[RMDB]
Chemical mapping of a 177-nucleotide RNA with 2A3 and DMS. The DMS profile rests on 1,133 reads. For 2A3, 1,163 sequencing reads were counted. 2A3 adducts were read by reverse transcription with SuperScript II with manganese. It was measured as part of the RMDB library OK2TRN. Values are in units of 0.01, from 0 to 300, in steps of 10. DMS adducts were read by reverse transcription with MarathonRT.

RNA sequence: GGGAACGACUCGAGUAGAGUCGAAAAGACACCAGCGCGGAAAAACCCCAGUGAGCAUCGCGCUGACGUCGAUCUCGACGGUGAGGUUCAUCCUGGCUCAGGAUCCCUCAAGAUCCGUGGCGCAACCAUCAUGCUAUCGCUUCGGCGAUAGCAUGAUAAAAGAAACAACAACAACAAC
Reactivity to 2A3 in 0.01 (KOAc 150mM, MgCl2 10mM, bicine 150mM(pH8.5), 24C), signal-to-noise 1, nucleotides 027 to 126: g000a000c010a040c010c040a040g000c010g000c030g120g000a000a060a020a150a240c030c070c020c000a040g090u050g140a090g060c040a070u040c010g000c010g020c030u010g000a020c030g020u000c000g000a080u080c040u000c030g050a040c030g000g050u130g000a030g000g070u060u100c030a000u000c020c000u120g120g180c080u040c120a000g000g010a010u140c090c000c000u000c000a010a040g040a080u010c010c000g040u050g030g010c040g000c010a000a040c000c000
Reactivity to DMS in 0.01 (KOAc 150mM, MgCl2 10mM, bicine 150mM(pH8.5), 24C), signal-to-noise 2, nucleotides 027 to 126: g000a060c020a090c030c020a030g020c020g030c010g020g000a080a040a090a140a140c040c040c060c060a120g010u020g000a050g010c100a090u000c020g010c000g000c020u010g010a030c050g000u010c000g000a080u000c090u000c020g010a000c090g020g020u010g000a010g020g020u000u010c160a030u000c000c020u000g020g010c140u030c060a110g010g020a020u000c160c010c050u020c050a080a070g030a030u000c040c020g030u000g000g010c000g010c040a050a190c020c060